[RMDB]
RNA sequence: GGGAACGACUCGAGUAGAGUCGAAAAAAGAUUCCGUUUUAUCCGGAAUAAAGGGACGAUAUAUGCAAAAACAUAUUAAACAAAGCCUCAACCAAAACAUGAGAGCUGUGUUAUAUAUCAAUGCAACAUCCCGCAUACGAUUCGUCGUAUGCGGGAUAAAAGAAACAACAACAACAAC
Reactivity to DMS in 0.01 (KOAc 150mM, MgCl2 10mM, bicine 150mM(pH8.5), 24C), signal-to-noise 1, nucleotides 027 to 126: a140a100g000a070u000u000c000c000g000u020u000u000u050a210u050c300c000g000g000a000a000u000a070a050a020g000g000g000a140c100g000a090u000a100u010a020u010g070c050a000a010a070a100a150c300a030u000a080u000u010a070a070a010c000a010a070a020g000c000c000u000c000a030a140c180c140a080a120a060a060c280a020u000g000a000g030a110g000c000u020g020u000g000u000u000a070u050a000u000a000u000c090a070a220u000g000c030a000a170c210
Reactivity to 2A3 in 0.01 (KOAc 150mM, MgCl2 10mM, bicine 150mM(pH8.5), 24C), signal-to-noise 2, nucleotides 027 to 126: a000a000g200a030u000u000c000c000g020u000u010u140u110a070u030c000c000g030g000a000a020u050a060a080a020g080g000g010a010c060g030a000u000a010u000a010u040g010c000a000a120a000a080a000c010a030u030a040u040u100a070a030a030c050a070a010a000g000c020c000u000c000a070a130c080c050a140a120a000a000c100a070u060g000a020g000a000g040c030u050g030u000g080u130u000a050u000a010u000a000u040c040a020a120u020g030c010a030a050c000
Background: An RNA of 177 nucleotides, treated with DMS and 2A3 and read out base by base. Source: RMDB library RFM100, as collected in RNAgym. High DMS reactivity at an A or C suggests that its Watson-Crick edge is free. 2A3 adducts were read by reverse transcription with SuperScript II with manganese.